An RNA of 207 nucleotides, treated with DMS and 2A3 and read out base by base. Values cover nucleotides 27 to 156. It was measured as part of the RMDB library OK3TST. 2A3 adducts were read by reverse transcription with SuperScript II with manganese. The RNA was probed in 150 mM KOAc, 10 mM MgCl2 and 150 mM bicine (pH 8.5) at 24 C.
RNA sequence: GGGAACGACUCGAGUAGAGUCGAAAACACUUCUUUUGUUACUCAGUCCAUGCGAGGUGGUGGCGUCAGCCCUGCUUCAGGGAGGACGCCUGCUGCUCAGCGUCCCUUCUGCAAGGAGCUGUGGGGACCCCAUUCUCUUUCCCAGACACGGGCACCACUAAAUAAUCCUAUUCGUAGGAUUAUUUAGAAAAGAAACAACAACAACAAC
Reactivity to DMS in 0.01 (KOAc 150mM, MgCl2 10mM, bicine 150mM(pH8.5), 24C), signal-to-noise 1, nucleotides 027 to 156: c020a130c110u000u000c040u010u000u010u010g020u000u000a110c050u000c070a040g020u000c040c030a020u030g030c010g010a130g010g040u010g000g050u000g040g040c000g000u000c060a050g020c010c000c010u020g000c270u000u000c100a050g050g000g010a040g010g010a020c010g020c000c000u020g000c030u070g010c000u020c030a250g010c050g000u010c030c020c010u000u000c080u000g020c020a070a090g000g010a230g000c080u020g020u010g040g000g010g010a130c030c020c020c020a070u000u010c050u010c040u000u000u010c010c020c010a250g010a150c120a060c040g000g030g030c010a040c040c030a130
Reactivity to 2A3 in 0.01 (KOAc 150mM, MgCl2 10mM, bicine 150mM(pH8.5), 24C), signal-to-noise 4, nucleotides 027 to 156: c050a020c050u150u130c030u040u190u100u100g080u110u110a080c040u030c100a030g050u000c040c020a060u110g000c030g020a040g010g030u030g010g010u010g010g010c010g010u000c010a020g040c020c000c010u090g090c150u260u300c070a000g000g000g010a030g020g000a000c000g000c010c000u000g000c010u030g010c000u010c060a010g010c010g030u040c010c000c000u040u050c040u060g040c020a080a140g120g040a090g110c030u020g050u040g010g010g000g030a040c000c000c010c020a080u120u040c020u000c000u060u050u010c020c010c010a050g020a070c060a030c090g010g020g020c030a050c000c030a040